Structure probing data (2A3 and DMS) for a 177-nucleotide construct. Reactivities are given for positions 27 through 126.
RNA sequence: GGGAACGACUCGAGUAGAGUCGAAAACAACACCUUCGACCUCCAACGCCCGACCAUAUUGAUCCUCGCAAUGCCCGAAUGGGCCCAACCACAAGUCGGUCUCUGUUUUGAUCCUUGGAAACUCACCUCAUUCCCUUGGGUUCGCCCAAGGGAAUGAAAAAGAAACAACAACAACAAC
Reactivity to 2A3 in 0.01 (KOAc 150mM, MgCl2 10mM, bicine 150mM(pH8.5), 24C), signal-to-noise 4, nucleotides 027 to 126: c020a000a000c030a010c030c000u060u050c030g060a040c010c010u050c040c020a080a030c050g030c020c020c000g050a080c020c020a040u030a080u120u120g050a040u020c000c020u020c030g010c040a040a080u080g010c010c010c010g090a090a080u120g010g000g020c000c020c020a030a050c010c010a050c020a090a030g030u040c030g020g070u020c020u000c020u040g090u030u060u020u080g040a050u030c000c000u000u020g020g000a080a030a000c010u010c020a060c010c000
Reactivity to DMS in 0.01 (KOAc 150mM, MgCl2 10mM, bicine 150mM(pH8.5), 24C), signal-to-noise 2, nucleotides 027 to 126: c090a140a120c110a060c040c000u000u000c040g010a110c010c010u010c020c060a040a180c070g030c000c020c010g000a120c020c020a040u060a050u000u010g000a160u040c040c000u010c020g000c010a030a070u030g010c000c030c030g000a080a030u010g020g000g010c000c070c060a070a110c050c050a110c060a070a040g000u000c010g000g000u000c020u010c020u030g020u000u000u000u000g010a070u000c020c040u010u040g000g020a030a020a060c020u020c040a160c060c060